An RNA of 170 nucleotides, treated with 2A3 and DMS and read out base by base.

[RMDB]
RNA sequence: GGGAACGACUCGAGUAGAGUCGAAAAGAAUGCUGUGUCUCGUUCAAUGCUGGGUCUUACCACUCAGACUGUUGAUUCCUCACAGGGUUCAGAAUACCAGUACGUUAUCUUCUGUCAAACAGCAGAUCAAGCCCAUGGUUCGCCAUGGGCAAAAGAAACAACAACAACAAC
Reactivity to 2A3 in 0.01 (KOAc 150mM, MgCl2 10mM, bicine 150mM(pH8.5), 24C), signal-to-noise 6, nucleotides 027 to 129: g020a000a000u060g110c000u000g010u010g010u050c040u050c210g050u050u040c000a000a000u010g010c000u000g000g000g020u030c050u060u090a050c030c020a020c000u020c010a010g010a180c040u110g060u020u000g040a060u080u060c010c010u010c000a000c000a000g060g000g000u000u000c000a010g120a100a020u060a070c000c010a010g080u060a060c130g080u090u050a030u030c010u090u010c010u040g120u070c040a060a130a160c000a080g010c010a010g020a020u090c060a040a060
Reactivity to DMS in 0.01 (KOAc 150mM, MgCl2 10mM, bicine 150mM(pH8.5), 24C), signal-to-noise 3, nucleotides 027 to 129: g060a000a000u060g020c000u000g010u020g030u000c160u040c300g040u050u010c050a000a000u000g030c030u000g000g010g000u030c060u040u090a130c250c300a030c010u010c020a000g010a150c070u050g030u040u000g050a000u000u070c090c160u010c020a000c060a000g000g010g030u000u000c000a120g010a130a100u060a130c000c010a150g060u040a100c200g030u040u060a010u000c070u050u000c010u030g020u000c170a070a040a190c000a030g040c070a050g020a040u040c030a000a000
The DMS profile rests on 11,498 reads. The RNA was probed in 150 mM KOAc, 10 mM MgCl2 and 150 mM bicine (pH 8.5) at 24 C.